[RMDB]
Record summary: Source: RMDB library RNAMAK, as collected in RNAgym. An RNA of 207 nucleotides, treated with DMS and 2A3 and read out base by base. 2A3 adducts were read by reverse transcription with SuperScript II with manganese. For DMS, 13,203 sequencing reads were counted.
RNA sequence: GGGAACGACUCGAGUAGAGUCGAAAACAAGAUGUUCGCAUCUUGAAAAUCCUAAGUCCAGACUAACUUGUCAGUACGAUAAGUAUCGGAAACGAUACUUUUGACGUACUUGGAUUUAGUUAGUUGGAUAUGGAAAAGCAGUAGUUUCGACUACUGCCCUCUGAUUCAUAUUCGUAUGAAUCAGAGGAAAAGAAACAACAACAACAAC
Reactivity to DMS in 0.01 (KOAc 150mM, MgCl2 10mM, bicine 150mM(pH8.5), 24C), signal-to-noise 5, nucleotides 027 to 156: c010a010a030g010a020u000g020u000u000c300g040c000a010u000c010u010u000g000a100a090a140a170u000c010c010u000a080a180g000u000c010c000a050g020a060c000u000a010a000c000u000u010g010u000c000a050g020u000a010c000g020a150u010a020a010g020u000a000u000c000g010g030a220a110a280c000g010a030u000a000c000u000u000u000u010g010a300c150g020u000a000c010u000u000g040g010a030u000u000u000a010g020u010u000a000g010u000u000g000g030a010u000a300u010g010g000a080a070a130a180g020c000a010g020u000a010g010u000u000u000c300g020a130c000u000a010c000u000g000c000
Reactivity to 2A3 in 0.01 (KOAc 150mM, MgCl2 10mM, bicine 150mM(pH8.5), 24C), signal-to-noise 9, nucleotides 027 to 156: c000a000a000g010a010u020g020u110u150c260g020c170a000u000c000u000u010g040a110a010a010a080u020c010c000u040a110a030g030u000c010c010a060g070a260c060u000a000a000c000u010u010g010u010c000a000g000u000a000c010g020a060u010a070a000g000u000a000u000c000g060g000a100a060a050c010g000a000u000a010c000u040u020u030u090g190a070c010g000u000a000c000u020u100g060g000a010u230u210u050a000g000u000u000a000g000u000u000g000g000a010u020a080u090g050g010a040a080a060a020g010c000a000g010u080a000g000u000u090u260c220g070a030c000u000a000c000u000g000c000